[RMDB]
RNA sequence: GGGAACGACUCGAGUAGAGUCGAAAAGGCAGCACAGAGCAACUCUAUAAUAUGCUUAUAUUAGGUCUAGAAGAAUGCAUCUUGAGACACAUGGGUAACCUAAUUAUAUAAUGCUUGUUCCAUACAGGAGUGAUUAUGCAGUGGGACCCUGCUGCAAAACUAGGAGACCAUUCGUGGUCUCCUAGUUAAAAGAAACAACAACAACAAC
Reactivity to 2A3 in 0.01 (KOAc 150mM, MgCl2 10mM, bicine 150mM(pH8.5), 24C), signal-to-noise 2, nucleotides 027 to 156: g010g020c000a000g000c030a080c020a060g050a010g030c010a020a060c040u020c030u070a090u040a230a160u130a090u200g010c010u060u050a060u020a020u140u110a020g010g000u020c050u040a070g050a120a000g020a090a030u120g040c040a090u000c010u130u050g050a040g030a020c090a020c030a070u090g070g020g000u040a020a010c010c000u010a070a050u170u020a040u020a050u040a190a000u090g020c000u030u030g020u090u050c050c020a040u090a190c070a050g050g030a020g050u020g000a020u050u090a020u140g010c010a010g000u070g020g010g000a040c000c000c020u010g040c000u000g000c000a000a150
Reactivity to DMS in 0.01 (KOAc 150mM, MgCl2 10mM, bicine 150mM(pH8.5), 24C), signal-to-noise 2, nucleotides 027 to 156: g020g000c000a050g030c020a150c050a090g030a110g020c030a080a070c010u000c010u000a100u010a070a080u010a060u000g020c030u010u000a050u000a040u030u000a040g030g000u000c030u000a180g010a070a120g030a100a080u010g010c060a120u000c070u000u000g030a160g020a090c030a080c060a070u010g000g010g040u000a070a050c030c020u000a050a050u000u000a060u000a110u000a060a060u000g000c070u010u000g010u000u010c050c030a150u000a120c060a060g000g000a070g020u000g030a100u000u000a110u000g010c000a040g040u000g020g020g020a100c020c090c050u000g020c000u000g000c020a020a030
Description
Chemical mapping of a 207-nucleotide RNA with 2A3 and DMS. The reactions ran in a buffer of 150 mM KOAc, 10 mM MgCl2 and 150 mM bicine (pH 8.5), at 24 C. Reactivities are rounded to 0.1 and cut off at 0 and 3. For DMS, 2,895 sequencing reads were counted. For 2A3 the reverse transcriptase was SuperScript II with manganese.